[RMDB]
RNA sequence: GGGAACGACUCGAGUAGAGUCGAAAAGCCAAACGUAUGGGUGCGAAAAAGGUGAUGGUAUUGAUCCAGCGUCGCGCUUAUGUGGAUCUGGUUCAGGGGAGCGUGAUCGAUAUUGCGAUUUCACCAAGUGCCCAUAUGAUUUCGAUCAUAUGGGCACAAAAGAAACAACAACAACAAC
Reactivity to 2A3 in 0.01 (KOAc 150mM, MgCl2 10mM, bicine 150mM(pH8.5), 24C), signal-to-noise 3, nucleotides 027 to 126: g050c000c000a050a020a000c020g040u040a000u040g030g010g010u040g000c030g090a070a040a010a070a060g000g050u080g050a060u060g030g120u200a130u160u150g060a030u020c020c000a010g010c030g090u010c010g000c000g040c060u150u030a060u160g050u040g020g030a060u030c030u080g080g000u040u040c030a040g030g010g000g030a020g000c040g010u060g000a020u030c060g020a020u020a080u200u110g060c020g040a050u080u020u040c040a070c020c000a030a040
Reactivity to DMS in 0.01 (KOAc 150mM, MgCl2 10mM, bicine 150mM(pH8.5), 24C), signal-to-noise 3, nucleotides 027 to 126: g020c010c010a050a080a080c090g010u000a030u000g000g000g020u000g030c060g000a040a060a070a130a120g000g010u000g020a100u000g020g010u000a160u020u010g010a090u010c010c030a040g000c270g000u010c030g010c030g010c090u010u000a050u010g000u000g000g010a070u000c050u000g010g010u010u010c080a100g000g000g010g010a060g020c060g020u000g000a040u010c220g010a090u010a090u000u010g020c010g010a120u010u000u000c000a060c030c060a050a170
Background:
The record gives the reactivity of an RNA of 177 nucleotides to 2A3 and DMS. 2A3 adducts were read by reverse transcription with SuperScript II with manganese. The RNA was probed in 150 mM KOAc, 10 mM MgCl2 and 150 mM bicine (pH 8.5) at 24 C. For 2A3, 2,745 sequencing reads were counted.